[RMDB]
RNA sequence: GGGAACGACUCGAGUAGAGUCGAAAAAAAAGAGAGGGAAGCUCUAAUGGCAAUAACGGUGACGAAUUGACACUCAAUGAGCUGCUAAACAUGAGUGAAUUGGAGGAUGAUUCACCAUCCCACACAACACGAAAAUAGUCUUCGGACUAUUUUCGUGAAAAGAAACAACAACAACAAC
Reactivity to DMS in 0.01 (KOAc 150mM, MgCl2 10mM, bicine 150mM(pH8.5), 24C), signal-to-noise 2, nucleotides 027 to 126: a070a060a040a060g030a140g020a120g000g000g000a140a010g010c010u010c020u000a080a070u000g000g000c000a040a000u000a090a080c040g010g040u010g010a170c030g020a060a040u000u010g000a040c020a050c110u000c160a060a050u000g000a060g000c030u000g000c060u000a020a060a080c100a050u000g010a070g030u000g000a030a020u010u000g000g010a130g010g000a100u000g000a050u000u000c020a010c080c000a070u010c010c000c010a140c300a070c200a080a100
Reactivity to 2A3 in 0.01 (KOAc 150mM, MgCl2 10mM, bicine 150mM(pH8.5), 24C), signal-to-noise 1, nucleotides 027 to 126: a000a000a000a000g060a000g000a040g010g050g000a040a000g000c000u000c010u050a130a120u070g030g010c030a050a000u080a170a030c030g000g060u050g040a020c030g050a030a060u000u050g040a040c020a000c040u050c030a040a100u060g000a020g040c050u050g020c040u130a080a050a040c050a090u070g010a020g070u010g030a010a040u050u040g120g030a060g110g000a030u130g000a020u120u040c000a020c020c000a010u030c000c040c000a020c010a020c000a050a050